[RMDB]
An RNA of 177 nucleotides, treated with DMS and 2A3 and read out base by base.
For DMS the reverse transcriptase was MarathonRT.
The DMS profile rests on 2,018 reads.
RNA sequence: GGGAACGACUCGAGUAGAGUCGAAAAUAAGAGAAUUGCUGGUGCAAAAGCGAUGCUUCUUCCCUAUGCACUUCGUCACUCAUCUGACGAUGAAGAUUGGGUAGCCGAGAAAUGGGAAGUUCGUCUAGCUAAAAUGCGUAUUCGUACGCAUUUUAGCAAAAGAAACAACAACAACAAC
Reactivity to DMS in 0.01 (KOAc 150mM, MgCl2 10mM, bicine 150mM(pH8.5), 24C), signal-to-noise 3, nucleotides 027 to 126: u010a110a070g000a080g010a080a040u010u000g020c030u010g000g010u020g000c160a060a060a070a040g040c070g010a080u000g020c070u000u010c030u010u000c010c010c000u000a210u000g010c170a150c080u000u000c090g010u000c010a050c080u000c160a060u000c050u010g010a230c120g000a070u000g010a090a040g000a060u010u010g000g000g010u000a080g040c010c040g000a090g000a060a070a110u010g010g010g000a010a040g010u000u010c040g000u000c040u000a210
Reactivity to 2A3 in 0.01 (KOAc 150mM, MgCl2 10mM, bicine 150mM(pH8.5), 24C), signal-to-noise 2, nucleotides 027 to 126: u150a060a030g100a000g070a040a050u110u030g000c030u070g060g090u150g080c060a080a070a050a010g030c030g020a020u050g020c070u070u000c000u010u010c000c010c040u030a070u080g090c050a030c070u060u020c000g010u000c000a040c080u010c000a090u000c000u090g120a160c170g030a060u080g030a030a010g020a010u040u030g020g010g010u030a030g000c010c020g020a020g110a030a090a030u130g000g010g010a020a030g000u020u020c030g030u020c050u040a010
Reactivities are given for positions 27 through 126. The data come from the RNA Mapping Database (RMDB), library OK2TRN.